[RMDB]
RNA sequence: GGGAACGACUCGAGUAGAGUCGAAAAGACGCCUGUGUGGCGAAGCGAGCAUGCGAAAGAGCCGCACAGUCCAUCUAAUAUAAAGCGGCGAGAUGGAUUGCUCGCGAAAAGAUCCAUAUCACUGAGAAUCCGUGCUAGUAUUCGUACUAGCACGGAUAAAAGAAACAACAACAACAAC
Reactivity to 2A3 in 0.01 (KOAc 150mM, MgCl2 10mM, bicine 150mM(pH8.5), 24C), signal-to-noise 4, nucleotides 027 to 126: g030a010c050g020c050c000u080g020u050g030u080g070g000c010g010a040a010g000c000g020a000g020c040a030u150g030c020g130a210a030a040g100a060g010c010c000g030c060a050c030a000g020u000c000c000a050u010c000u040a210a080u180a080u120a200a120a010g100c040g060g000c040g030a030g000a010u020g030g010a000u010u090g000c000u000c020g010c000g010a020a030a000a010g050a050u010c020c030a010u020a020u220c040a060c040u070g060a020g120a180
Reactivity to DMS in 0.01 (KOAc 150mM, MgCl2 10mM, bicine 150mM(pH8.5), 24C), signal-to-noise 2, nucleotides 027 to 126: g000a110c050g010c090c000u020g030u000g120u030g010g000c000g010a120a130g050c000g000a010g020c000a060u010g000c130g000a150a070a110g000a100g050c010c020g000c020a050c100a120g010u000c010c000a020u000c050u000a170a050u010a110u030a010a090a070g050c010g010g040c050g000a040g030a080u020g000g000a050u020u010g000c010u010c020g000c000g000a040a090a090a080g000a130u000c040c000a070u000a050u070c000a120c030u000g010a070g000a180

Source: RMDB library OK1LIB, as collected in RNAgym. An RNA of 177 nucleotides, treated with 2A3 and DMS and read out base by base. The 2A3 profile rests on 2,422 reads. 2A3 adducts were read by reverse transcription with SuperScript II with manganese. DMS adducts were read by reverse transcription with MarathonRT.